[RMDB]
RNA sequence: GGGAACGACUCGAGUAGAGUCGAAAACAACACGUCCUCGUCGUACAGAGUGGUAACAUGUGUAACCACAUAUCCAAGCUUGGGUACACGGGCUUGACCCAACCCCUUGGGCGGAUGGUGGCACAUGAAAAGAAGUAACACUUCGGUGUUACUUCAACGCUUCCUCAUUGUUCGCAAUGAGGAAGCGAAAAGAAACAACAACAACAAC
Reactivity to 2A3 in 0.01 (KOAc 150mM, MgCl2 10mM, bicine 150mM(pH8.5), 24C), signal-to-noise 1, nucleotides 027 to 156: c040a000a020c010a000c020g100u110c000c000u000c020g130u040c040g040u160a030c000a100g030a050g090u120g000g110u120a080a020c000a000u010g030u000g000u050a070a120c010c000a000c000a090u110a020u100c010c030a000a000g040c030u030u000g000g030g000u030a030c060a030c040g000g020g000c020u240u290g190a300c020c010c010a000a020c000c000c000c000u000u000g000g000g000c010g000g000a020u000g050g030u000g000g010c020a000c000a000u020g000a010a040a000a030g000a000a000g000u000a000a000c020a000c000u070u080c270g090g000u000g000u000u000a000c040u000u000c000a000a000